[RMDB]
RNA sequence: GGGAACGACUCGAGUAGAGUCGAAAACAGCUACUGAGAUAGGGUAUUGUUAUUAUCCCCAUUUUACAGAUAAGGAAACAGCUGAAUUUAUGUCACUUGCCCAAUGUCACACAACUAGCAAGACUGACUCCUUGAAGCUCAUCACAUGUAAGAACUAGAUCGCAGUCACGUUCGCGUGACUGCGAUCAAAAGAAACAACAACAACAAC
Reactivity to 2A3 in 0.01 (KOAc 150mM, MgCl2 10mM, bicine 150mM(pH8.5), 24C), signal-to-noise 2, nucleotides 027 to 156: c030a000g020c000u020a000c020u070g060a130g020a170u190a070g070g000g140u070a080u160u220g080u110u000a170u220u010a040u080c000c000c030c050a020u030u070u020u040a130c070a010g060a070u070a050a080g090g050a150a100a050c060a010g000c020u010g070a140a200u070u100u080a020u070g020u000c000a000c070u070u020g010c000c120c000a160a120u150g050u100c070a090c000a010c000a210a040c050u070a010g000c000a030a030g040a040c070u000g010a030c000u120c020c020u010u040g080a000a000g000c020u020c080a120u100c070a080c090a070u080g020u110a050a090g030a060a080c040u120a110

Chemical mapping of a 207-nucleotide RNA with 2A3. As a SHAPE reagent, 2A3 marks flexible, mostly unpaired nucleotides at the ribose 2'-OH. Source: RMDB library OK3TST, as collected in RNAgym. For 2A3 the reverse transcriptase was SuperScript II with manganese. Reactivities are rounded to 0.1 and cut off at 0 and 3. The RNA was probed in 150 mM KOAc, 10 mM MgCl2 and 150 mM bicine (pH 8.5) at 24 C.